[RMDB]
RNA sequence: GGGAACGACUCGAGUAGAGUCGAAAAUUUGUGAAAAUGAGGAUCGCCGGUGUAUGCCGACACGUCAUGGUGUAGGGGAGAUCAAGAAGGUGUGGUCGGCCUCUCGUUUUUGGCAAAAACUUGCGUGCUAUAUUAUAAUUUUCGAAUUAUAAUAUAGAAAAGAAACAACAACAACAAC
Reactivity to DMS in 0.01 (KOAc 150mM, MgCl2 10mM, bicine 150mM(pH8.5), 24C), signal-to-noise 2, nucleotides 027 to 126: u020u000u010g000u020g000a030a020a030a050u000g020a060g000g000a050u020c150g000c010c020g020g010u020g010u010a060u020g010c010c010g000a050c080a030c040g020u000c060a100u030g010g000u010g040u010a040g000g010g010g020a220g010a060u020c060a040a070g000a080a080g000g000u010g020u000g000g000u000c020g020g010c010c040u010c020u010c010g010u000u000u000u000u000g010g000c010a020a020a050a130a060c070u010u000g010c080g030u010g000
Reactivity to 2A3 in 0.01 (KOAc 150mM, MgCl2 10mM, bicine 150mM(pH8.5), 24C), signal-to-noise 2, nucleotides 027 to 126: u010u010u030g000u010g040a020a000a010a030u070g010a000g020g030a040u080c010g000c000c000g000g000u000g000u080a020u040g020c020c000g020a010c000a010c060g050u060c000a070u110g070g000u080g030u080a000g000g010g000g020a050g020a010u050c020a020a020g070a030a040g050g010u090g020u030g020g030u010c000g040g050c000c000u010c000u000c000g000u000u010u000u040u160g070g010c000a010a020a000a020a070c010u030u030g010c000g030u030g000